[RMDB]
RNA sequence: GGGAACGACUCGAGUAGAGUCGAAAAGAUAUGGAUAAGUCUUAGACCCGUCGACGAAGUCGCUCGGAAACGAGCGACAGAGACGCUAAGUCAAUCCUAAGUCAGACCCACUCGUUCGCGAGUGGAAUCUAUCAACUACCUUCGGGUAGUUGAUAGAAAAAGAAACAACAACAACAAC
Reactivity to 2A3 in 0.01 (KOAc 150mM, MgCl2 10mM, bicine 150mM(pH8.5), 24C), signal-to-noise 2, nucleotides 027 to 126: g020a010u020a010u110g000g000a010u070a240a190g000u030c000u040u000a020g060a140c150c270c120g000u020c010g000a300c030g010a050a010g020u020c020g020c000u000c010g030g010a040a040a000c000g020a050g000c000g000a000c000a000g000a000g000a000c050g040c180u010a010a020g020u050c020a070a050u000c020c020u010a080a000g020u000c030a010g070a240c000c000c020a000c000u000c010g040u090u070c300g010c020g130a000g020u030g010g020a040a070
Reactivity to DMS in 0.01 (KOAc 150mM, MgCl2 10mM, bicine 150mM(pH8.5), 24C), signal-to-noise 2, nucleotides 027 to 126: g010a010u000a170u020g000g000a020u000a070a150g010u000c000u000u000a020g020a300c300c230c140g000u000c010g010a160c110g010a080a120g000u000c010g000c000u010c000g000g010a030a020a030c010g030a010g010c010g020a000c000a020g010a090g030a010c020g020c010u000a000a000g010u000c010a180a030u000c010c000u000a050a150g000u010c010a080g000a130c160c000c000a010c000u000c000g020u000u020c200g020c000g010a020g020u000g000g010a030a020